Chemical mapping of a 177-nucleotide RNA with 2A3 and DMS.
Source: RMDB library OK2TRN, as collected in RNAgym.

RNA sequence: GGGAACGACUCGAGUAGAGUCGAAAAGCAACGGCCGGGAGACGCCACAGCAGAGGGCUUCGGCAACGUCCUCCAAGAAGAACCGGCUGGCAGCCUGGGACGCACUGCUCACCCUGGAGGCCACUGAGGUACAAGUUUCAUUCGUGAAACUUGUACCAAAAGAAACAACAACAACAAC
Reactivity to 2A3 in 0.01 (KOAc 150mM, MgCl2 10mM, bicine 150mM(pH8.5), 24C), signal-to-noise 2, nucleotides 027 to 126: g040c050a080a170c080g030g030c000c050g040g010g010a100g050a040c020g020c020c020a060c020a040g010c030a010g050a090g070g000g020c030u180u180c170g110g000c060a070a010c020g010u020c000c000u000c030c010a120a050g100a070a010g040a080a060c000c000g000g000c000u040g050g000c000a010g030c020c010u040g000g010g010a060c050g010c030a160c190u170g010c010u040c040a080c000c000c000u030g010g020a030g060g000c020c030a030c050u060g060a030
Reactivity to DMS in 0.01 (KOAc 150mM, MgCl2 10mM, bicine 150mM(pH8.5), 24C), signal-to-noise 2, nucleotides 027 to 126: g030c060a130a170c080g000g010c020c000g010g000g030a130g010a080c140g010c050c060a060c100a070g000c150a110g000a100g050g000g000c000u000u030c050g000g010c080a060a100c270g000u000c010c000u020c040c010a080a250g020a090a110g000a100a150c040c000g000g010c020u000g000g040c050a060g030c010c000u000g000g010g010a110c110g000c000a080c100u010g010c010u000c090a150c030c010c010u010g000g020a060g010g010c040c040a090c080u000g010a210